[RMDB]
RNA sequence: GGGAACGACUCGAGUAGAGUCGAAAAGAUAAUGUCUUCGGACAUUAUCCACGCCUAAAGGCUUUAAUUAAUUAGCUAAGCCUGCUAAUUAAAAUGGCUUUAACAACUGUCCAUUCGUGGACAGUAACUCCUAGGAAGAAUUCGUUCUUCCUAGGAGAAAAGAAACAACAACAACAAC
Reactivity to DMS in 0.01 (KOAc 150mM, MgCl2 10mM, bicine 150mM(pH8.5), 24C), signal-to-noise 4, nucleotides 027 to 126: g000a000u000a000a010u000g000u000c000u000u020c200g010g010a010c000a000u000u000a010u000c000c050a070c230g000c010c010u000a070a040a040g000g010c000u000u000u010a080a130u000u000a020a000u000u000a010g010c010u010a060a180g020c270c290u000g000c000u000a000a020u000u000a010a010a090a130u000g010g000c000u010u000u000a060a080c220a060a060c010u000g000u000c000c010a050u000u010c200g020u000g010g000a010c000a000g010u000a050a100
Reactivity to 2A3 in 0.01 (KOAc 150mM, MgCl2 10mM, bicine 150mM(pH8.5), 24C), signal-to-noise 4, nucleotides 027 to 126: g000a000u010a010a000u000g010u000c010u030u070c240g120g000a000c000a000u000u000a000u000c010c000a040c060g050c000c010u080a150a100a010g040g000c000u110u040u030a050a050u060u010a010a010u010u010a060g010c020u070a120a100g180c030c080u020g000c000u010a020a000u010u030a020a030a040a090u080g000g000c000u050u050u060a100a040c070a020a010c000u010g000u000c000c000a020u020u060c200g110u060g000g000a000c010a000g000u000a000a020